Annotation
An RNA of 177 nucleotides, treated with DMS and 2A3 and read out base by base. Reactivities are given for positions 27 through 126. DMS adducts were read by reverse transcription with MarathonRT. The RNA was probed in 150 mM KOAc, 10 mM MgCl2 and 150 mM bicine (pH 8.5) at 24 C. For 2A3, 2,621 sequencing reads were counted.

[RMDB]
RNA sequence: GGGAACGACUCGAGUAGAGUCGAAAAGAUAUGGACGGAUGUGGACAUGCCUAACCGUCGGAAACGACGGCUAGGCAACAGCCACGAUCCGUCCUAAGUCAAACAGCCCUCGUUCGCGAGGGCUGAACUGUCGAUAAGAGUUCGCUCUUAUCGACAGAAAAGAAACAACAACAACAAC
Reactivity to DMS in 0.01 (KOAc 150mM, MgCl2 10mM, bicine 150mM(pH8.5), 24C), signal-to-noise 2, nucleotides 027 to 126: g000a010u000a160u020g000g010a020c010g010g010a000u000g020u000g000g000a020c090a200u010g020c000c000u020a010a000c000c000g020u010c000g020g000a020a020a100c000g010a010c000g010g010c000u010a030g030g040c000a050a020c220a150g000c000c010a010c010g000a030u000c000c000g010u000c000c000u000a000a080g020u000c000a160a130a300c030a010g000c000c000c000u010c000g030u000u060c230g040c020g010a000g010g010g000c000u000g010a010a080
Reactivity to 2A3 in 0.01 (KOAc 150mM, MgCl2 10mM, bicine 150mM(pH8.5), 24C), signal-to-noise 1, nucleotides 027 to 126: g010a000u040a000u120g000g010a020c000g000g000a010u050g000u020g030g000a060c130a300u300g010c010c000u010a020a010c020c000g000u010c000g000g020a030a030a030c040g010a000c010g020g000c000u010a000g010g030c000a010a020c010a000g050c010c000a010c000g000a020u030c000c010g000u040c010c000u000a000a000g000u000c000a030a010a130c000a010g080c000c000c000u000c020g040u130u060c270g020c020g130a010g000g100g000c010u000g000a000a000